[RMDB]
RNA sequence: GGGAACGACUCGAGUAGAGUCGAAAAGAUAUGGAAUGUGUGUGGCAACAGCGAUCCAUCGGAAACGAUGGUGUCGACAUGCCAACACAUUCCUAAGUCAAAAGAGGUGAUCUUCGGAUCACCUCAAGAUAUCCCGUUGGUUCGCCAACGGGAUAUCAAAAGAAACAACAACAACAAC
Reactivity to 2A3 in 0.01 (KOAc 150mM, MgCl2 10mM, bicine 150mM(pH8.5), 24C), signal-to-noise 3, nucleotides 027 to 126: g000a010u030a000u030g010g000a000a000u010g020u000g020u060g040u080g020g000c090a300a060c110a300g020c030g000a020u000c000c000a010u020c010g020g000a000a010a000c020g000a000u010g010g040u100g090u020c000g000a000c050a200u300g010c000c010a000a000c000a000c000a000u000u000c000c010u020a000a000g010u020c010a050a010a060a180g000a000g050g000u030g000a010u000c000u040u210c300g060g000a010u010c000a000c000c010u000c000a000a020
Reactivity to DMS in 0.01 (KOAc 150mM, MgCl2 10mM, bicine 150mM(pH8.5), 24C), signal-to-noise 2, nucleotides 027 to 126: g000a010u010a070u020g000g010a020a020u000g010u000g010u000g040u000g030g030c000a120a060c230a150g000c000g000a040u010c000c000a000u000c000g020g000a000a000a010c000g000a020u000g000g000u050g010u000c020g000a020c100a300u000g000c010c000a050a020c000a000c000a000u000u010c000c000u000a000a040g000u010c010a110a090a100a110g000a030g000g010u000g000a000u000c010u010u010c300g040g000a000u000c000a000c000c000u000c010a000a030
An RNA of 177 nucleotides, treated with 2A3 and DMS and read out base by base. Conditions: 150 mM KOAc, 10 mM MgCl2 and 150 mM bicine (pH 8.5), 24 C. For 2A3 the reverse transcriptase was SuperScript II with manganese. The data come from the RNA Mapping Database (RMDB), library TTRDES.